[RMDB]
RNA sequence: GGGAACGACUCGAGUAGAGUCGAAAACGCUGGGAUCAUAGCUGAUCAUUACGGGAGUGUUCUAAAUACUGAAGCGCGCACGGUAUUUAGAACACUUUGAUCGUAAUGGUUUGGCUGGGAUCCUGUGCUGAAGCGCGCACGGCAACCGAAAGGUGCGGUUAACUAUCAUCUUCGGAUGAUAGUUAACAAAAGAAACAACAACAACAAC
Reactivity to DMS in 0.01 (KOAc 150mM, MgCl2 10mM, bicine 150mM(pH8.5), 24C), signal-to-noise 2, nucleotides 027 to 156: c050g020c040u000g000g020g010a020u010c000a090u000a030g020c000u000g000a020u000c010a020u000u000a000c000g000g010g000a020g020u010g040u000u000c010u000a020a000a020u000a020c010u000g000a060a080g000c020g020c020g010c010a300c020g010g030u000a000u000u000u000a010g000a010a010c000a000c000u000u010u010g010a050u000c010g010u000a010a020u000g020g020u010u000u020g100g000c010u000g000g030g010a010u000c000c000u000g010u010g050c030u010g000a150a070g000c000g020c010g000c020a130c040g020g010c050a080a230c050c040g020a150a100a170g020g020u000g000c020g040
Reactivity to 2A3 in 0.01 (KOAc 150mM, MgCl2 10mM, bicine 150mM(pH8.5), 24C), signal-to-noise 2, nucleotides 027 to 156: c040g000c030u070g000g000g000a000u000c010a030u020a010g000c010u020g030a020u010c000a000u000u000a000c010g020g060g060a010g010u000g000u000u000c000u000a010a010a010u010a000c000u020g060a210a020g040c020g010c010g000c030a010c000g000g000u000a000u000u000u000a000g010a000a000c010a000c000u010u010u020g010a010u020c000g000u000a010a000u000g010g080u060u070u280g020g000c010u010g020g010g000a000u010c000c000u010g030u030g000c030u060g030a120a020g000c010g000c000g000c010a010c020g040g010c010a090a090c010c010g050a080a050a030g020g000u010g010c030g030

Chemical mapping of a 207-nucleotide RNA with DMS and 2A3. The RNA was probed in 150 mM KOAc, 10 mM MgCl2 and 150 mM bicine (pH 8.5) at 24 C. For 2A3 the reverse transcriptase was SuperScript II with manganese. DMS adducts were read by reverse transcription with MarathonRT.